[RMDB]
RNA sequence: GGGAACGACUCGAGUAGAGUCGAAAACUUCUAACAAUAGUAUACUCAGAUCGCACAUUAACGGUGGCUCUGGGUUUCCAGGACCCACCGAGAGCGGUGAGAAGGAAAACACCCUCUCAAAUGAGGACAUGAAUGGAAAUUUCGAUUUCCAUUCAUGAAAAGAAACAACAACAACAAC
Reactivity to DMS in 0.01 (KOAc 150mM, MgCl2 10mM, bicine 150mM(pH8.5), 24C), signal-to-noise 7, nucleotides 027 to 126: c100u000u000c040u000a100a120c150a110a120u000a080g010u010a090u000a100c010u010c010a060g000a060u000c030g010c010a100c070a120u000u010a080a150c100g010g010u000g010g020c170u000c010u000g000g000g010u000u010u020c010c010a060g000g000a090c190c010c020a030c050c050g000a050g000a040g010c070g010g020u000g010a040g010a070a050g010g010a080a080a090a100c190a080c050c000c000u000c000u000c020a060a070a090u000g000a030g000g000a290
Reactivity to 2A3 in 0.01 (KOAc 150mM, MgCl2 10mM, bicine 150mM(pH8.5), 24C), signal-to-noise 7, nucleotides 027 to 126: c030u090u010c040u140a120a080c040a120a170u170a140g100u110a070u060a180c020u020c020a030g030a190u090c030g060c080a040c020a150u150u200a230a080c100g020g010u000g000g000c010u000c010u040g010g010g080u040u060u030c010c000a020g010g030a030c000c020c020a000c000c040g010a020g010a010g010c050g000g010u030g010a020g030a040a090g070g040a040a110a030a030c040a060c020c040c000u000c000u000c000a110a140a080u120g010a010g000g030a010